[RMDB]
RNA sequence: GGGAACGACUCGAGUAGAGUCGAAAAAUUCCUCAGCCUUACUCCGGGGGCUUUUGUGCCGUAAAGCGCCCUGGCAUUGCCUGAGGAUAGACGAGGAAGCACACGUCCCUCCCCAGCAAGACUCCGCAUUACUUGCCUGGUUCGCCAGGCAAGUAAUAAAAGAAACAACAACAACAAC
Reactivity to DMS in 0.01 (KOAc 150mM, MgCl2 10mM, bicine 150mM(pH8.5), 24C), signal-to-noise 2, nucleotides 027 to 126: a080u040u000c000c000u010c030a000g000c040c030u010u060a080c090u010c010c020g000g000g010g000g010c000u000u000u030u030g010u020g000c100c040g070u030a100a050a010g000c000g060c040c000c000u040g010g000c300a030u010u000g000c300c000u000g000a080g010g040a010u070a010g010a140c180g000a120g000g020a100a040g020c010a070c060a110c090g000u000c030c050c160u010c010c000c020c020a080g000c140a020a070g000a140c120u030c030c000g000c100
Reactivity to 2A3 in 0.01 (KOAc 150mM, MgCl2 10mM, bicine 150mM(pH8.5), 24C), signal-to-noise 3, nucleotides 027 to 126: a000u070u000c020c000u010c000a000g020c020c000u050u100a030c060u030c020c010g000g000g000g020g000c000u000u000u000u020g150u090g100c060c050g050u050a010a010a000g020c050g300c000c000c000u010g020g000c040a020u010u080g010c010c010u000g010a010g000g000a030u030a030g080a020c050g020a040g060g040a090a070g010c070a010c000a000c020g080u010c020c000c000u030c000c000c000c000a000g000c040a040a040g030a080c040u020c070c020g030c030